An RNA of 177 nucleotides, treated with DMS and 2A3 and read out base by base. Values cover nucleotides 27 to 126. For DMS the reverse transcriptase was MarathonRT. The reactions ran in a buffer of 150 mM KOAc, 10 mM MgCl2 and 150 mM bicine (pH 8.5), at 24 C. For 2A3, 2,658 sequencing reads were counted.
[RMDB]
RNA sequence: GGGAACGACUCGAGUAGAGUCGAAAAAGCGUCGACGAACCUUCCAACCUUCCAAAGCAGCAAAAGCUGAACCUUCCAACCUUCCAAUCUACUCGAGAGGAGGAGGAGGUGGAGGAGGAGGAAUUAAACACUUGGUGUUAUUCGUAACACCAAGUGUAAAAGAAACAACAACAACAAC
Reactivity to DMS in 0.01 (KOAc 150mM, MgCl2 10mM, bicine 150mM(pH8.5), 24C), signal-to-noise 2, nucleotides 027 to 126: a090g010c070g000u010c070g010a090c040g030a090a130c030c040u000u000c010c030a090a160c040c020u000u000c040c040a040a070a120g010c020a050g010c100a080a050a100a070g010c010u010g000a070a090c040c010u000u000c020c020a090a100c080c000u000u010c020c050a040a150u000c010u000a040c060u000c040g030a060g000a210g000g010a070g000g010a170g000g000a030g010g020u000g000g010a090g000g000a100g000g020a120g000g010a300a080u000u010a060a080
Reactivity to 2A3 in 0.01 (KOAc 150mM, MgCl2 10mM, bicine 150mM(pH8.5), 24C), signal-to-noise 2, nucleotides 027 to 126: a000g080c050g060u030c010g020a080c040g020a130a070c000c000u020u000c030c010a120a130c020c010u040u000c010c020a150a150a000g010c010a010g000c020a120a120a220a010g000c020u040g030a080a050c010c000u050u000c010c030a080a090c020c030u100u000c000c020a020a070u010c010u050a050c030u030c060g040a040g000a030g030g040a040g000g020a050g020g040a040g000g010u070g020g060a060g000g040a070g030g070a030g030g000a010a020u160u130a120a190